[RMDB]
RNA sequence: GGGAACGACUCGAGUAGAGUCGAAAAUGAACGUGCGUACAUCUCUCUCAGACUGUACGACAGUCUGACUCUCUCGCACUCUAGUUCCACGAGAGAGAGUGAGCGUUGGAACUAGGGUGAAAUGAAAACUUAGCUCGUAUUUCGAUACGAGCUAAGUAAAAGAAACAACAACAACAAC
Reactivity to 2A3 in 0.01 (KOAc 150mM, MgCl2 10mM, bicine 150mM(pH8.5), 24C), signal-to-noise 6, nucleotides 027 to 126: u160g020a090a020c070g080u130g070c020g020u110a020c020a070u020c030u010c010u000c010u000c050a010g030a110c080u020g020u060a050c040g090a060c030a000g050u000c020u040g010a010c000u000c000u000c000u000c030g030c020a000c000u010c000u000a000g000u010u000c010c000a010c010g040a060g010a000g000a010g010a020g080u150g120a070g030c040g050u110u080g010g000a000a000c000u000a000g010g000g000u020g010a070a050a060u140g020a020a050a000
Reactivity to DMS in 0.01 (KOAc 150mM, MgCl2 10mM, bicine 150mM(pH8.5), 24C), signal-to-noise 3, nucleotides 027 to 126: u010g020a070a060c070g000u010g020c030g020u000a020c030a070u010c040u000c060u020c080u000c060a130g020a060c170u000g010u000a040c080g000a080c020a070g010u000c020u000g010a040c020u010c000u000c020u000c040g010c020a010c000u000c000u000a000g000u010u000c000c000a040c050g010a110g000a050g000a090g000a090g010u010g010a100g020c060g010u000u000g010g000a000a010c020u000a030g010g010g010u000g010a020a040a050u010g000a100a070a070
The record gives the reactivity of an RNA of 177 nucleotides to 2A3 and DMS. DMS adducts were read by reverse transcription with MarathonRT. The DMS profile rests on 3,642 reads. As a SHAPE reagent, 2A3 marks flexible, mostly unpaired nucleotides at the ribose 2'-OH. Reactivities are rounded to 0.1 and cut off at 0 and 3. The RNA was probed in 150 mM KOAc, 10 mM MgCl2 and 150 mM bicine (pH 8.5) at 24 C.